[RMDB]
RNA sequence: GGGAACGACUCGAGUAGAGUCGAAAAUGCAUGUUCGCAUGCAAAAAAGGGGUCUCGCAGAUUUCGAUGAGAUGUGAACUACUCCUGAAGCCUCCACGGGAGCACAUCGAGAAAUCGUGCGAGACGGAGGCACCCAAAAAACGAGCUUCGGCUCGAAGCAGCAUUAAUAGUUCGCUAUUAAUGCUGCAAAAGAAACAACAACAACAAC
Reactivity to DMS in 0.01 (KOAc 150mM, MgCl2 10mM, bicine 150mM(pH8.5), 24C), signal-to-noise 2, nucleotides 027 to 156: u010g020c010a010u000g000u000u010c300g000c000a040u000g030c020a010a040a030a060a100a190g020g020g020g000u010c030u000c000g040c010a060g010a040u000u000u000c010g010a280u010g040a250g000a050u000g020u000g020a120a110c080u000a300c020u000c010c000u040g020a060a200g000c010c000u000c000c000a300c010g000g010g010a020g000c020a020c010a020u000c010g020a180g000a010a020a000u000c000g000u000g060c000g040a040g020a020c030g000g010a020g020g070c000a050c000c010c010a000a060a100a050a080a180c010g000a040g020c000u000u010c300g060g000c000u000c000g000a020a080
Reactivity to 2A3 in 0.01 (KOAc 150mM, MgCl2 10mM, bicine 150mM(pH8.5), 24C), signal-to-noise 5, nucleotides 027 to 156: u040g000c010a010u010g000u070u140c210g030c130a020u030g000c010a000a020a010a000a070a140g030g000g000g020u000c000u000c000g000c010a000g010a020u000u010u010c080g100a220u300g040a060g000a040u010g000u010g010a130a110c090u180a070c000u300c000c000u000g010a050a010g000c000c000u000c010c010a040c020g010g000g000a000g010c000a000c000a000u010c020g040a040g000a220a000a000u010c020g010u010g010c000g000a000g000a000c010g010g000a000g000g000c000a010c000c000c010a040a050a010a050a000a010c010g020a000g000c000u040u170c280g150g000c010u010c000g000a050a020